[RMDB]
Source: RMDB library M2RFPK, as collected in RNAgym. Structure probing data (2A3) for a 207-nucleotide construct. Values cover nucleotides 27 to 156.
RNA sequence: GGGAACGACUCGAGUAGAGUCGAAAACUCAAUGUAGGGAAUAACAUUGAAUUGAUACAAAUACCUUUUUCGGUGUAGGGAAAAACACCGAAUUGGUACAAAUACCUUUCUCAAUGUAGGGAAUAACAAAACAGGCAUCGCUUCGGCGAUGCCUGAACCGUACCGUUAGGUUCGCCUAACGGUACGGAAAAGAAACAACAACAACAAC
Reactivity to 2A3 in 0.01 (KOAc 150mM, MgCl2 10mM, bicine 150mM(pH8.5), 24C), signal-to-noise 3, nucleotides 027 to 156: c010u000c010a010a050u090g030u110a160g060g090g080a140a140u140a100a070c030a040u020u020g030a050a080u090u120g040a110u170a190c060a030a110a020u060a020c010c000u040u050u030u020u020c000g000g000u010g010u020a100g130g050g060a010a110a020a000a010c000a000c010c000g010a000a000u000u010g010g000u000a010c050a030a090a000u110a100c030c030u000u020u020c040u000c040a060a060u200g040u070a090g000g030g120a080a040u160a210a040c010a040a040a030a020c000a000g000g010c010a000u000c010g030c030u060u110c210g060g000c040g000a000u000g000c000c010u000g000a000a000